This 177-nucleotide RNA was probed chemically with 2A3 and DMS. The reactions ran in a buffer of 150 mM KOAc, 10 mM MgCl2 and 150 mM bicine (pH 8.5), at 24 C.

RNA sequence: GGGAACGACUCGAGUAGAGUCGAAAAGAUAUGGAAUAGUAAGCAGCGACGAAGCGGACCAUGGUCGGAAACGACCAUGAAGCAGAGCUGUAUCUAUUCCUAAGUCAAAUCCUCGUUCGCGAGGAAAGAUAACCAGUACCUUCGGGUACUGGUUAUCAAAAGAAACAACAACAACAAC
Reactivity to 2A3 in 0.01 (KOAc 150mM, MgCl2 10mM, bicine 150mM(pH8.5), 24C), signal-to-noise 2, nucleotides 027 to 126: g000a010u070a030u120g000g000a010a020u000a000g010u060a300a160g100c000a010g000c010g260a300c090g020a300a000g000c020g000g020a020c100c020a010u000g010g000u010c010g010g000a030a080a020c020g010a000c000c000a000u010g000a010a000g000c010a010g000a020g000c000u000g000u020a040u020c000u000a010u000u050c010c000u010a090a000g040u000c020a040a050a250u030c010c010u000c000g020u050u110c300g010c030g120a020g000g040a100a000a000
Reactivity to DMS in 0.01 (KOAc 150mM, MgCl2 10mM, bicine 150mM(pH8.5), 24C), signal-to-noise 2, nucleotides 027 to 126: g000a010u000a300u010g000g000a040a030u000a010g000u010a120a230g000c000a040g000c020g000a190c300g000a180a110g000c000g020g050a110c250c000a000u000g000g000u010c000g000g010a040a050a180c000g010a020c000c010a000u000g020a060a190g000c000a080g000a090g000c000u030g010u000a160u010c010u000a000u000u000c000c000u000a030a080g000u000c010a070a120a100u010c000c000u000c020g000u010u000c240g000c010g000a020g000g000a030a040a070

For DMS, 1,275 sequencing reads were counted. In probing experiments dimethyl sulfate is read out at A N1 and C N3, which are open when not base-paired. The 2A3 profile rests on 2,293 reads.